Source: RMDB library OK1LIB, as collected in RNAgym. The record gives the reactivity of an RNA of 177 nucleotides to 2A3 and DMS. For DMS the reverse transcriptase was MarathonRT. For 2A3 the reverse transcriptase was SuperScript II with manganese. For DMS, 38,078 sequencing reads were counted.

RNA sequence: GGGAACGACUCGAGUAGAGUCGAAAAUGCCUGGAGAAGUUUGACACCAAAUUCAAAUUGGUGUUAGGGGAGCUGGGGCCUUUCAAAAGAGAGCUUUGUAGAGGCGAUCUUUUUGACUACUUUGGAACUGGAAAGGUAUGUUCGCAUAUCUUUUCAGAAAAGAAACAACAACAACAAC
Reactivity to 2A3 in 0.01 (KOAc 150mM, MgCl2 10mM, bicine 150mM(pH8.5), 24C), signal-to-noise 5, nucleotides 027 to 126: u070g020c000c010u010g020g020a100g010a070a040g020u040u040u080g000a000c000a000c000c010a000a020a040u120u050c020a020a060a110u030u000g000g000u000g000u000u000a000g010g010g000g000a020g010c020u010g000g010g000g000c010c000u030u060u020c010a000a000a010a000g010a000g000a000g010c000u030u030u080g130u090a040g010a010g050g000c010g010a010u010c000u010u050u000u000u020g020a020c020u020a010c000u060u020u060g040g010a050a020
Reactivity to DMS in 0.01 (KOAc 150mM, MgCl2 10mM, bicine 150mM(pH8.5), 24C), signal-to-noise 9, nucleotides 027 to 126: u030g000c020c020u000g010g010a080g000a120a110g010u020u010u010g010a010c000a010c000c000a000a020a090u040u050c300a070a130a110u010u000g010g010u000g000u000u000a030g010g010g000g010a070g010c040u000g000g010g000g010c060c070u000u010u000c020a020a020a010a020g000a030g000a300g010c010u000u010u020g010u030a100g010a070g000g010c010g000a070u000c000u000u000u010u010u010g000a070c260u010a060c090u010u000u010g000g010a100a190